An RNA of 207 nucleotides, treated with 2A3 and DMS and read out base by base. The 2A3 profile rests on 1,636 reads. Values cover nucleotides 27 to 156. Source: RMDB library M2RFPK, as collected in RNAgym. For 2A3 the reverse transcriptase was SuperScript II with manganese. Conditions: 150 mM KOAc, 10 mM MgCl2 and 150 mM bicine (pH 8.5), 24 C.

RNA sequence: GGGAACGACUCGAGUAGAGUCGAAAAGGCUAUGACUCGUGUCCGUCGGCGUAGCCGACAACAUGCCCAGGUAGCCCAGACCUUCAAGGCUACGGUGCGUUGCGACGCAUGGUCUGAUUCUUCACAAAGUAGUCCCGAGUCUUCGGACUCGGGACAAGAUAGAUAUGGUGUUCGCACCAUAUCUAUCAAAAGAAACAACAACAACAAC
Reactivity to 2A3 in 0.01 (KOAc 150mM, MgCl2 10mM, bicine 150mM(pH8.5), 24C), signal-to-noise 2, nucleotides 027 to 156: g010g000c040u050a030u230g050a090c000u000c020g000u000g010u040c050c020g020u010c000g000g000c180g210u160a020g000c000c000g040a000c000a040a010c030a060u160g020c000c000c010a010g040g000u000a000g000c000c040c060a010g010a010c000c010u000u010c050a040a000g000g000c030u010a000c010g000g010u010g000c010g000u010u070g000c130g140a000c020g000c000a000u020g000g000u040c000u000g010a020u070u050c070u110u110c090a070c040a300a130a050g040u070a050g010u030c000c000c000g000a000g000u020c000u040u100c180g080g000a000c000u000c000g000g000g000a000c000a000a000
Reactivity to DMS in 0.01 (KOAc 150mM, MgCl2 10mM, bicine 150mM(pH8.5), 24C), signal-to-noise 2, nucleotides 027 to 156: g020g000c000u000a020u010g010a070c000u000c010g050u000g020u000c010c100g020u010c000g000g040c020g040u010a210g000c010c010g000a090c010a080a050c050a080u000g020c020c010c020a130g000g010u000a030g000c000c020c200a060g010a120c020c030u000u000c120a110a300g000g000c020u000a040c010g000g030u010g020c030g010u000u010g020c090g000a160c030g000c020a040u000g010g000u000c040u000g000a280u010u000c060u000u000c060a240c120a060a130a210g030u010a110g000u020c010c020c000g020a000g010u000c000u000u010c300g040g010a000c000u000c000g010g000g000a000c010a000a000